[RMDB]
RNA sequence: GGGAACGACUCGAGUAGAGUCGAAAAGGGAGCGCGCUGGAAGGAUCAGCUCCCGAGAGGGGAAAACGGUAAAGAGCAUUGGAUCGUCGAAGGUGAGGACCCCAAGAAGGAAAAAAGAGAAAGCAAGCAUACCUUACUUCUUCGGAAGUAAGGUAUGAAAAGAAACAACAACAACAAC
Reactivity to 2A3 in 0.01 (KOAc 150mM, MgCl2 10mM, bicine 150mM(pH8.5), 24C), signal-to-noise 2, nucleotides 027 to 126: g000g000g030a000g010c040g000c040g030c100u070g060g080a110a040g050g000a060u090c030a020g000c000u000c000c000c000g010a020g020a020g000g000g030g020a040a110a000a020c060g010g000u100a080a060a030g070a030g020c050a050u040u170g050g000a030u050c040g080u010c030g080a030a030g010g010u070g020a040g000g060a070c010c000c040c010a020a020g050a010a060g040g030a060a080a020a020a040a020g060a010g040a030a040a000g070c060a030a010g040
Reactivity to DMS in 0.01 (KOAc 150mM, MgCl2 10mM, bicine 150mM(pH8.5), 24C), signal-to-noise 3, nucleotides 027 to 126: g010g010g010a030g030c020g010c200g000c040u000g000g010a180a090g000g000a070u030c070a180g020c020u000c020c010c000g000a030g010a120g000g010g020g000a040a090a060a080c080g000g010u010a030a060a070g000a100g020c060a090u000u000g000g010a050u000c030g000u010c080g000a060a060g000g010u010g010a090g010g010a150c060c050c040c030a060a050g000a040a060g000g020a000a030a020a060a040a090g000a100g010a030a070a070g010c090a070a080g010